Source information
The record gives the reactivity of an RNA of 177 nucleotides to 2A3 and DMS. 2A3 is a SHAPE reagent: it acylates the 2'-hydroxyl of flexible nucleotides of all four kinds. It was measured as part of the RMDB library M2PK50. Conditions: 150 mM KOAc, 10 mM MgCl2 and 150 mM bicine (pH 8.5), 24 C.
RNA sequence: GGGAACGACUCGAGUAGAGUCGAAAAUUAAAGCCAUUCGUGGCUUUAAACUCUGGUGUCCCGAAAAGGCUCGUGCGCGAUCCCACGCGAACCAGUUUACGAUUAAGGAUAAGUUCGCUUAUCCUAAGUUUGUGUAUAAGUUCGCUUAUACACAAACAAAAGAAACAACAACAACAAC
Reactivity to 2A3 in 0.01 (KOAc 150mM, MgCl2 10mM, bicine 150mM(pH8.5), 24C), signal-to-noise 5, nucleotides 027 to 126: u020u000a010a000a010g010c000c000a010u030u060c200g090u030g010g000c020u000u010u010a010a010a010c030u030c020u050g060g020u060g060u090c000c020c020g030a100a140a020a020g060g000c030u030c090g080u090g040c040g000c010g020a030u030c000c020c010a010c010g010c010g010a020a030c000c010a040g020u050u100u090a130c140g030a110u160u130a100a010g010g000a000u000a010a010g010u010u070c160g020c120u000u000a010u000c000c000u000a010a020
Reactivity to DMS in 0.01 (KOAc 150mM, MgCl2 10mM, bicine 150mM(pH8.5), 24C), signal-to-noise 6, nucleotides 027 to 126: u000u000a000a010a000g010c000c000a020u000u000c180g020u000g000g010c000u000u000u000a010a040a090c130u000c030u010g010g020u000g020u000c010c010c000g010a070a080a100a160g000g010c040u000c080g020u000g000c030g020c020g010a090u000c010c010c010a170c040g020c020g010a070a070c020c040a070g010u000u000u000a080c130g010a120u010u010a130a030g010g000a010u000a000a010g010u000u020c220g010c000u000u000a000u000c000c000u000a030a070